RNA sequence: GGGAACGACUCGAGUAGAGUCGAAAACAGUGCCCCCAGUUGCAUAGCUCUGGGAGAUGACAUCCACCUUGAAUCUCCACAGUGGAACCUCUAGGGCUAUGACUUAGCGUCCAAUGUAAUGUUACCACCUGUAGUUGCACAAGGGGCCCUGGAUGAACAUAAAUUACCGUUUCGACGGUAAUUUAUGAAAAGAAACAACAACAACAAC
Reactivity to 2A3 in 0.01 (KOAc 150mM, MgCl2 10mM, bicine 150mM(pH8.5), 24C), signal-to-noise 3, nucleotides 027 to 156: c000a040g020u020g030c000c000c010c010c020a030g020u050u050g010c000a000u020a020g000c020u000c000u020g100g010g000a030g000a030u070g010a020c000a000u010c000c000a040c050c040u030u090g080a170a100u090c090u080c120c030a060c000a020g000u000g100g150a300a300c000c000u010c000u010a000g000g000g000c000u010a010u020g000a010c010u030u070a010g070c040g020u040c030c000a030a040u060g010u020a040a000u050g040u130u030a090c030c060a080c020c010u050g030u050a040g020u060u020g000c020a010c010a080a050g000g000g010g000c000c040c000u000g000g020a100u100g050a090a010
Reactivity to DMS in 0.01 (KOAc 150mM, MgCl2 10mM, bicine 150mM(pH8.5), 24C), signal-to-noise 3, nucleotides 027 to 156: c020a100g030u010g010c030c000c010c030c020a170g000u000u000g010c030a060u010a040g030c010u010c000u000g030g010g000a030g010a030u000g000a090c070a130u000c020c010a060c020c000u000u000g000a170a140u010c110u000c100c070a110c190a080g010u010g020g010a030a300c020c010u000c000u000a060g030g020g000c000u000a020u000g010a060c070u000u000a070g030c100g000u000c070c060a100a160u000g010u000a080a080u000g020u000u000a090c040c030a120c050c030u010g010u010a110g010u000u000g020c030a090c070a090a060g010g020g070g030c000c030c030u000g010g000a110u000g000a130a280